[RMDB]
RNA sequence: GGGAACGACUCGAGUAGAGUCGAAAAUUAUACCCGUAUAUCAUUCAGACCCUUUAUGGAACUGUCAUUCAACCCCAAAAAUCUAGUGCAAAUAUUGUCUUAAUUACUUAGGCUAAAAGAAAUAAGUUAUACAAUACACUCUUCGGAGUGUAUUGAACAUACUACAAGAGUUCGCUCUUGUAGUAUGAAAAGAAACAACAACAACAAC
Reactivity to DMS in 0.01 (KOAc 150mM, MgCl2 10mM, bicine 150mM(pH8.5), 24C), signal-to-noise 1, nucleotides 027 to 156: u000u010a110u010a150c000c010c040g000u010a190u010a110u000c050a090u000u010c040a120g000a090c020c030c040u000u020u010a120u000g030g000a120a110c040u000g020u000c070a210u000u010c050a040a160c030c010c010c040a040a040a080a060a080u010c050u000a060g040u010g000c070a060a020a150u000a040u010u000g000u000c010u000u000a080a060u010u010a050c020u000u000a070g040g020c070u000a030a020a120a130g010a070a110a080u000a020a040g000u000u000a110u000a170c000a010a020u000a000c000a050c000u010c000u000u000c290g020g040a010g030u010g030u010a010u000u000g000a040a210
Reactivity to 2A3 in 0.01 (KOAc 150mM, MgCl2 10mM, bicine 150mM(pH8.5), 24C), signal-to-noise 2, nucleotides 027 to 156: u100u080a040u040a150c010c040c000g010u110a260u020a020u150c020a050u130u010c020a040g030a100c010c010c030u050u140u110a110u130g020g020a100a040c020u030g090u070c050a030u190u120c040a080a230c010c010c000c000a040a140a000a000a030u050c040u050a000g020u020g070c000a040a080a080u090a050u070u090g040u050c020u050u060a080a090u110u020a070c030u030u070a030g030g020c020u050a010a000a000a190g080a020a140a020u110a110a000g000u000u060a020u010a010c000a000a000u000a000c000a000c000u000c010u020u030c120g100g000a000g000u000g010u000a000u000u000g000a010a010
This 207-nucleotide RNA was probed chemically with DMS and 2A3.
For 2A3, 1,224 sequencing reads were counted.
For DMS, 2,133 sequencing reads were counted.
For DMS the reverse transcriptase was MarathonRT.
Reactivities are given for positions 27 through 156.